Structure probing data (2A3 and DMS) for a 177-nucleotide construct. For DMS, 823 sequencing reads were counted. Values cover nucleotides 27 to 126. The 2A3 profile rests on 752 reads.
[RMDB]
RNA sequence: GGGAACGACUCGAGUAGAGUCGAAAACGUCCACAUCUUGCCUCUGGCAUUUCCCUGUACGUUAGCGAUGAUCCGCAAGGUAGCAAUGGGUGUACCACCAUCCCGCGCCGGGUCCUCUGAUCAAGGGGCUAGACGGCACUUUCGAGUGCCGUCUAGCAAAAGAAACAACAACAACAAC
Reactivity to 2A3 in 0.01 (KOAc 150mM, MgCl2 10mM, bicine 150mM(pH8.5), 24C), signal-to-noise 2, nucleotides 027 to 126: c040g080u010c000c000a000c000a090u000c010u040u120g000c000c000u120c060u100g050g000c020a030u000u030u030c000c020c000u030g080u030a020c030g120u030u120a070g040c040g060a050u100g000a060u130c080c000g000c080a070a060g000g000u040a010g090c100a140a010u100g000g040g030u070g060u130a120c060c020a120c010c010a030u050c010c010c000g020c010g000c010c020g030g000g000u000c010c010u100c000u040g000a020u130c020a040a180g020g000g040
Reactivity to DMS in 0.01 (KOAc 150mM, MgCl2 10mM, bicine 150mM(pH8.5), 24C), signal-to-noise 1, nucleotides 027 to 126: c110g020u000c050c030a100c170a300u030c020u000u050g000c050c000u000c080u000g020g060c040a140u000u070u100c050c000c030u030g030u040a050c140g000u010u070a000g000c070g000a060u030g100a000u000c020c030g000c000a120a230g000g020u030a040g000c070a050a000u010g020g000g080u000g000u000a100c060c100a040c030c030a010u050c060c100c010g000c250g120c040c000g000g010g070u000c000c000u000c190u000g060a000u000c200a140a050g080g000g040